[RMDB]
RNA sequence: GGGAACGACUCGAGUAGAGUCGAAAACUGCCGCCGGGACGCAGUGAUCCUCGCAGGGUCGCACGGUCGCCUCGGGUCGGCCACGUGUCGGCUCGACCUGCGAGGGGAGCGAGUGGCGAGCCCGACCAAAACUUUCUCGCCUUCGGGCGAGAAAGAAGAUGUCACUAUCGUUCGCGAUAGUGACAUCAAAAGAAACAACAACAACAAC
Reactivity to 2A3 in 0.01 (KOAc 150mM, MgCl2 10mM, bicine 150mM(pH8.5), 24C), signal-to-noise 2, nucleotides 027 to 156: c020u010g010c000c000g010c010c010g050g060g140a010c030g040c030a200g210u000g000a010u000c000c000u000c000g000c000a010g000g000g090u160c050g000c070a060c110g000g050u060c010g000c010c020u050c010g000g000g000u000c000g000g000c000c040a180c110g300u300g000u040c020g000g030c000u010c010g050a120c010c010u000g000c000g000a020g000g000g000g000a000g000c000g030a090g130u110g020g000c000g010a040g010c030c000c010g000a010c020c000a000a050a000a080c000u000u000u020c000u010c010g000c000c030u030u100c190g060g010g010c000g000a000g010a000a000a000g000a010a000